Annotation:
An RNA of 207 nucleotides, treated with 2A3 and read out base by base. Conditions: 150 mM KOAc, 10 mM MgCl2 and 150 mM bicine (pH 8.5), 24 C. The data come from the RNA Mapping Database (RMDB), library M2RFPK. 2A3 adducts were read by reverse transcription with SuperScript II with manganese.

[RMDB]
RNA sequence: GGGAACGACUCGAGUAGAGUCGAAAAACGAGUCCGUACGCGGACUCGAAGGGCCCCAGAAGACCAAGGGGCCCAAACCUACCACUCAUUAGAUGCAUGGAAAUCACUAGGAGAUACGUCACCUAGAACACGCUUUUAAGCUUCGGCUUAAAAGCAACGCAUACAGGAUGUUCGCAUCCUGUAUGCGAAAAGAAACAACAACAACAAC
Reactivity to 2A3 in 0.01 (KOAc 150mM, MgCl2 10mM, bicine 150mM(pH8.5), 24C), signal-to-noise 1, nucleotides 027 to 156: a000c000g000a000g010u030c020c000g030u050a010c160g020c030g090g010a000c000u000c000g000a000a010g000g000g000c000c000c000c010a090g070a200a030g010a120c110c030a140a030g000g010g020g060c000c000c000a000a000a000c000c000u020a030c040c010a010c000u050c000a010u000u180a060g010a090u140g020c040a070u070g110g080a090a110a070u080c030a010c060u010a000g040g000a060g010a100u070a070c220g050u010c030a000c020c000u000a000g000a080a020c090a020c050g000c010u020u020u000u010a000a000g000c000u020u040c240g090g000c000u010u010a000a000a000a000g020c000a000a000